[RMDB]
RNA sequence: GGGAACGACUCGAGUAGAGUCGAAAAGUCAUGCCGAGAGGCAUGACAGGUAGCGAGAGCUACCGAAGAGUCAUGCGCCCUACCAAACGCAUGACUCGAGAGUAUAUGUGGUGUAUGCCGACCUACAUUAUAUAUACGAACGGUCGGGCGGUAGGGAGACCUCGUAUAGUUUCGACUAUACGAGGUCAAAAGAAACAACAACAACAAC
Reactivity to DMS in 0.01 (KOAc 150mM, MgCl2 10mM, bicine 150mM(pH8.5), 24C), signal-to-noise 1, nucleotides 027 to 156: g000u000c010a010u020g000c000c010g000a300g020a300g030g000c000a050u020g000a030c000a020g040g000u000a020g010c020g030a300g000a300g030c000u000a010c020c000g000a030a070g020a020g020u010c000a010u000g020c040g030c020c010c040u010a050c090c030a150a090a120c030g000c000a010u010g000a010c000u000c000g010a040g010a300g000u000a010u000a030u010g000u000g030g020u000g030u000a030u000g000c030c300g000a160c050c020u000a030c020a010u000u000a010u000a080u000a030u000a020c020g010a090a150c250g000g000u030c030g000g020g000c050g010g060u010a030g000g010g000a300
Reactivity to 2A3 in 0.01 (KOAc 150mM, MgCl2 10mM, bicine 150mM(pH8.5), 24C), signal-to-noise 2, nucleotides 027 to 156: g000u000c000a000u010g000c000c000g040a040g010a030g040g000c010a000u000g000a000c010a000g000g000u000a000g020c010g000a060g000a000g130c000u000a000c000c000g030a100a020g010a000g040u030c010a000u030g000c020g010c050c010c030u060a070c000c030a050a220a040c040g000c000a000u000g000a000c000u030c000g030a050g000a000g050u040a050u010a020u080g080u060g090g000u050g040u040a030u090g170c030c060g020a060c010c020u030a030c020a060u100u030a060u010a010u010a000u010a070c090g100a160a000c040g020g040u030c010g000g010g000c050g000g000u040a040g030g000g000a060